[RMDB]
RNA sequence: GGGAACGACUCGAGUAGAGUCGAAAAGGCUUAUCAAGACAGGGUUCAGAAAAAGGCCUGAGACCCAAGGGACAUUAAAGGAGGGGGUUGAAUCUAUUUUGGGGUGUAGAGGCUUGAAGAUUUGACCGAAUAGGUACUACUUCGGUAGUACCUAUUCAAAAGAAACAACAACAACAAC
Reactivity to DMS in 0.01 (KOAc 150mM, MgCl2 10mM, bicine 150mM(pH8.5), 24C), signal-to-noise 6, nucleotides 027 to 126: g010g020c020u010u000a070u000c080a090a080g000a110c090a150g000g010g000u000u010c050a080g010a050a080a080a110a080g000g010c020c000u000g000a120g010a130c020c010c010a100a110g000g000g000a090c090a080u010u000a040a100a120g000g000a080g010g010g000g000g010u000u000g010a050a060u000c070u000a130u010u010u000u010g020g000g000g000u000g000u000a070g000a080g000g010c060u000u010g000a050a050g010a090u010u000u000g010a120c230c120
Reactivity to 2A3 in 0.01 (KOAc 150mM, MgCl2 10mM, bicine 150mM(pH8.5), 24C), signal-to-noise 4, nucleotides 027 to 126: g000g000c020u070u020a050u130c070a080a030g050a050c020a070g150g090g010u120u150c050a020g120a030a130a010a020a010g050g000c000c020u010g010a050g010a030c000c010c010a000a030g000g000g010a020c030a090u170u200a130a070a030g050g010a110g040g020g010g000g010u050u060g030a040a020u020c010u030a090u070u090u060u110g020g010g010g000u050g020u010a070g010a010g040g040c050u040u080g020a020a000g010a050u050u060u190g020a020c030c020